[RMDB]
RNA sequence: GGGAACGACUCGAGUAGAGUCGAAAACUGGCCUGUGUGGAAGUACGAGAGUACUUCCGGCUCUACGGGAGUAGAGCCACACAGAUCGUGGAGCGAUGUCUUGGAACUACUCCCGUAGUUCCGGUAUGACUCUCGUCAUACCAAGACGCCAGCCACGCGAUGGAACAUAGUUCGCUAUGUUCCAUCGAAAAGAAACAACAACAACAAC
Reactivity to DMS in 0.01 (KOAc 150mM, MgCl2 10mM, bicine 150mM(pH8.5), 24C), signal-to-noise 1, nucleotides 027 to 156: c040u010g010g060c000c060u000g010u000g010u010g040g000a130a150g020u000a030c000g040a180g000a250g030u000a020c000u000u010c000c010g010g020c100u000c020u000a020c020g000g000g000a160g030u000a010g030a140g040c030c030a040c140a010c030a070g000a040u000c030g030u000g000g030a210g000c030g000a050u000g020u000c040u000u000g000g000a020a070c000u000a000c010u000c060c070c060g050u000a010g050u000u000c010c010g010g040u000a020u000g020a070c000u000c080u000c100g030u000c030a060u000a070c030c070a060a060g000a070c090g020c020c000a100g000c000c040a040c130g000
Reactivity to 2A3 in 0.01 (KOAc 150mM, MgCl2 10mM, bicine 150mM(pH8.5), 24C), signal-to-noise 5, nucleotides 027 to 156: c010u010g010g010c010c010u120g040u090g010u040g090g040a120a060g030u180a030c010g000a010g000a000g030u120a170c010u030u000c000c000g000g000c000u010c000u000a000c020g020g010g010a010g010u000a000g000a030g020c010c000a010c000a000c000a000g170a030u040c040g040u120g190g200a110g150c030g040a050u040g050u060c060u080u090g000g000a050a060c000u000a000c010u010c020c010c020g000u000a000g010u000u010c000c000g000g020u150a140u200g020a020c000u000c000u010c040g050u010c010a010u070a030c000c010a010a000g040a010c040g000c000c000a010g030c010c000a050c040g050
The record gives the reactivity of an RNA of 207 nucleotides to DMS and 2A3. The RNA was probed in 150 mM KOAc, 10 mM MgCl2 and 150 mM bicine (pH 8.5) at 24 C. 2A3 adducts were read by reverse transcription with SuperScript II with manganese. Source: RMDB library OK3TST, as collected in RNAgym. For DMS the reverse transcriptase was MarathonRT.